The data come from the RNA Mapping Database (RMDB), library M2RFPK. This 207-nucleotide RNA was probed chemically with 2A3 and DMS.
RNA sequence: GGGAACGACUCGAGUAGAGUCGAAAAAGUGCACUAGGUACGCCUAGUGCGCAUUCCAGGACAUACUGCUGAGGAUGUCAAAAAUGCAGUUGGAGUCCUCAACUGGAUAGGCUACGGCCUAUCCAGAAAAAGACUUGGUUGUUCGCAACCAAGUCAAGUGAGAGUUAUUCUUCGGAAUAACUCUCACAAAAGAAACAACAACAACAAC
Reactivity to 2A3 in 0.01 (KOAc 150mM, MgCl2 10mM, bicine 150mM(pH8.5), 24C), signal-to-noise 1, nucleotides 027 to 156: a000g030u010g020c010a000c000u000a000g030g010u010a010c180g080c000c010u010a000g000u000g000c010g000c000a000u030u030c010c010a010g020g000a010c000a050u170a020c000u010g030c010u050g070a020g120g200a240u250g300u300c200a040a110a000a000a010u180g000c010a000g000u000u040g100g110a130g030u000c000c020u070c030a080a150c010u000g000g010a000u010a010g000g000c010u000a020c290g010g000c000c010u000a010u040c000c000a000g010a000a000a000a000a000g000a000c000u000u010g010g000u000u010g040u040u080c160g010c080a000a000c010c010a000a000g000u010c000a010a020
Reactivity to DMS in 0.01 (KOAc 150mM, MgCl2 10mM, bicine 150mM(pH8.5), 24C), signal-to-noise 1, nucleotides 027 to 156: a080g020u010g000c000a050c010u000a040g010g000u020a100c300g020c000c000u000a030g020u000g000c000g030c000a110u000u000c020c030a160g000g020a090c000a080u010a040c030u000g010c070u000g000a150g050g020a090u000g000u000c020a000a010a130a140a170u010g050c020a160g000u000u000g000g010a260g000u000c000c020u010c000a060a130c000u010g000g000a010u000a010g000g030c020u010a140c300g070g000c000c000u000a000u020c010c000a010g000a000a070a040a120a140g000a010c010u000u000g010g010u000u000g000u000u010c300g000c020a020a040c010c000a000a000g020u000c020a000a090
Record summary:
The 2A3 profile rests on 794 reads. DMS adducts were read by reverse transcription with MarathonRT. The DMS profile rests on 1,949 reads.